The record gives the reactivity of an RNA of 207 nucleotides to 2A3. Reactivities are given for positions 27 through 156. Source: RMDB library M2RFOK, as collected in RNAgym. The 2A3 profile rests on 646 reads.
[RMDB]
RNA sequence: GGGAACGACUCGAGUAGAGUCGAAAAAGCACGGUUUUUGAGGACGCAUUUUGUCCGUGCGGUAAUGCCCUCCUUUACACUUUCUCGCAUGGUGCGGGAGUGUGGAGAGGAACCAAAAGCUAGUCUCGAUAGGCGGUUAACUUCGGUUAACCGCCAACGCACAGUAAUCGUUCGCGAUUACUGUGCGAAAAGAAACAACAACAACAAC
Reactivity to 2A3 in 0.01 (KOAc 150mM, MgCl2 10mM, bicine 150mM(pH8.5), 24C), signal-to-noise 1, nucleotides 027 to 156: a000g000c000a000c030g000g000u000u000u000u000u000g080a100g000g010a010c030g020c110a140u000u000u000u030g030u000c000c000g000u000g010c020g010g080u200a130a060u220g070c040c000c000u070c000c000u030u000u010a010c000a000c000u040u120u120c010u020c000g000c020a060u200g270g040u220g120c000g000g020g000a020g000u020g000u030g000g000a070g020a020g000g040a060a130c010c020a000a000a000a000g040c000u120a040g020u000c010u040c110g090a140u100a150g000g020c000g000g000u010u050a010a000c010u000u010c150g020g000u020u000a000a020c110c000g000c000c000a000a000